Structure probing data (2A3 and DMS) for a 177-nucleotide construct. Source: RMDB library OK2TST, as collected in RNAgym. Reactivities are rounded to 0.1 and cut off at 0 and 3.
RNA sequence: GGGAACGACUCGAGUAGAGUCGAAAAGAACAGGCUCUCGUACAUCCACUGCGAUCCCAAGCAGUGCCCCUGCGGCGACUACUGCAGCAACAGGCCGUUCCAUCUGCUGCCCCAGCCCAAGACGGAGCGAUAUAGGCACAUUCGUGUGCCUAUAUCGAAAAGAAACAACAACAACAAC
Reactivity to 2A3 in 0.01 (KOAc 150mM, MgCl2 10mM, bicine 150mM(pH8.5), 24C), signal-to-noise 2, nucleotides 027 to 126: g050a070a020c020a050g060g000c000u000c020u020c070g000u020a060c020a100u030c050c000a010c020u030g000c000g050a140u100c030c010c000a010a000g010c000a000g000u020g030c000c000c000c010u060g000c030g000g000c010g040a010c040u110a020c030u050g000c030a050g010c010a020a110c020a060g040g040c000c000g040u080u000c020c000a070u030c030u060g000c010u040g000c010c000c000c020a020g010c000c000c000a030a020g070a020c060g020g000a060g050
Reactivity to DMS in 0.01 (KOAc 150mM, MgCl2 10mM, bicine 150mM(pH8.5), 24C), signal-to-noise 5, nucleotides 027 to 126: g010a110a120c090a090g010g000c010u000c010u010c040g020u000a100c120a070u010c120c020a030c030u000g000c010g020a100u010c020c010c010a140a180g000c010a020g010u000g000c030c020c020c050u010g020c090g000g010c050g010a090c100u000a080c070u000g000c050a030g000c050a070a100c120a090g010g020c060c020g000u000u010c020c020a090u000c050u000g000c020u000g010c020c010c020c040a120g010c030c020c020a060a080g020a070c100g000g000a100g020